[RMDB]
RNA sequence: GGGAACGACUCGAGUAGAGUCGAAAAAGCGCAUCGAGCACCUCCACUGGGUCGGUGCCGAGAUCCCAGCGGGACAAAAUCAGCAGCCCCCCGCUGACCGUUUCGAUCUCGAGCAGGCGCACCAGGCGUCCCAAACGAGAUUCGUCUCGUUUGGGACAAAAGAAACAACAACAACAAC
Reactivity to 2A3 in 0.01 (KOAc 150mM, MgCl2 10mM, bicine 150mM(pH8.5), 24C), signal-to-noise 2, nucleotides 027 to 126: a000g090c030g000c040a020u050c080g030a020g030c010a020c020c020u070c050c000a170c070u130g000g000g130u090c060g050g000u000g030c000c010g000a000g000a010u020c000c010c020a010g010c000g000g000g000a040c110a080a100a040a100u170c040a080g070c000a050g010c010c000c000c000c020c000g000c010u020g020a070c000c050g040u020u160u070c100g000a040u000c000u000c000g030a030g000c040a020g000g160c000g000c010a030c000c010a030g120g030c100
Reactivity to DMS in 0.01 (KOAc 150mM, MgCl2 10mM, bicine 150mM(pH8.5), 24C), signal-to-noise 1, nucleotides 027 to 126: a060g000c050g100c000a150u090c040g000a130g000c060a030c010c010u000c000c090a270c000u000g050g030g030u030c210g000g000u000g040c000c040g000a010g000a010u000c050c160c010a060g000c030g010g000g050a130c120a040a090a100a210u010c070a000g010c010a040g000c060c040c030c030c030c060g000c000u000g020a040c050c010g010u020u000u030c300g000a010u010c000u000c000g000a230g000c160a050g000g020c000g000c020a030c050c020a000g060g030c070